This 177-nucleotide RNA was probed chemically with 2A3 and DMS. The DMS profile rests on 1,164 reads. Values cover nucleotides 27 to 126. The data come from the RNA Mapping Database (RMDB), library M2PK50. DMS adducts were read by reverse transcription with MarathonRT.
RNA sequence: GGGAACGACUCGAGUAGAGUCGAAAAAUCCUGCCCUUCGGGGCAGGAUGCAGCUUCGCUCUUGAGAGCGCGACUUAAGAGGUAUCCCAACGCGCAGAAGCACUAUUUCUCAGUUCGCUGAGAAAAAAGCUGAAAUACUGUUCGCAGUAUUUCAGCUAAAAGAAACAACAACAACAAC
Reactivity to 2A3 in 0.01 (KOAc 150mM, MgCl2 10mM, bicine 150mM(pH8.5), 24C), signal-to-noise 1, nucleotides 027 to 126: a000u020c000c000u000g020c000c000c000u010u080c170g050g000g000g010c000a000g000g000a000u000g000c030a010g000c020u040u050c020g020c020u020c000u030u070g040a040g000a050g030c050g030c040g100a140c020u000u010a030a000g030a000g080g020u070a110u040c000c000c050a070a040c080g080c020g000c060a060g030a020a020g020c020a010c060u110a200u090u060u000c040u000c000a010g020u020u060c160g050c110u000g000a000g000a040a000a000a000a010
Reactivity to DMS in 0.01 (KOAc 150mM, MgCl2 10mM, bicine 150mM(pH8.5), 24C), signal-to-noise 2, nucleotides 027 to 126: a030u000c000c000u000g000c000c010c000u000u020c230g060g020g000g000c000a000g000g000a000u000g020c180a080g030c040u000u000c010g000c010u000c000u000u010g000a050g000a110g000c040g000c080g000a120c020u010u000a030a030g010a100g010g020u000a130u000c000c010c000a090a080c210g000c070g010c030a160g000a030a030g020c030a180c220u000a110u000u000u000c000u000c000a020g000u000u000c160g000c000u000g000a000g000a000a000a020a040a160